[RMDB]
RNA sequence: GGGAACGACUCGAGUAGAGUCGAAAACUUCAAUGGUUCGCCAUUGAAGAAACAUGGUAAACGCUGACACCAUGAAAGAUCGAAUAACGAUCAAAGCGUAAAAAAGUAGUCAGUUCGCUGACUACAACUAAGAAUCCCUGUUCGCAGGGAUUCUUAGAAAAGAAACAACAACAACAAC
Reactivity to DMS in 0.01 (KOAc 150mM, MgCl2 10mM, bicine 150mM(pH8.5), 24C), signal-to-noise 2, nucleotides 027 to 126: c000u000u010c010a010a000u000g000g040u000u010c240g000c010c000a010u010u000g010a000a010g000a130a050a160c040a050u000g010g000u000a060a090a060c020g010c010u000g020a160c200a050c020c000a000u010g000a070a120a050g030a020u000c010g020a230a120u010a130a110c050g000a000u000c010a050a070a160g010c000g020u030a000a050a030a070a050a100g000u000a000g000u000c010a010g030u010u010c300g020c000u010g010a010c010u010a000c020a020a180
Reactivity to 2A3 in 0.01 (KOAc 150mM, MgCl2 10mM, bicine 150mM(pH8.5), 24C), signal-to-noise 2, nucleotides 027 to 126: c010u020u000c000a010a000u000g020g030u040u020c170g040c070c000a010u000u000g000a030a000g060a020a070a000c010a010u000g020g010u120a170a160a000c030g030c060u060g090a020c030a020c130c010a010u000g020a150a060a020g000a020u010c000g010a180a180u220a300a120c050g010a010u020c010a000a060a000g000c000g030u110a030a120a000a000a010a010g010u030a000g000u000c020a020g000u040u080c190g010c070u000g000a000c000u010a020c010a000a010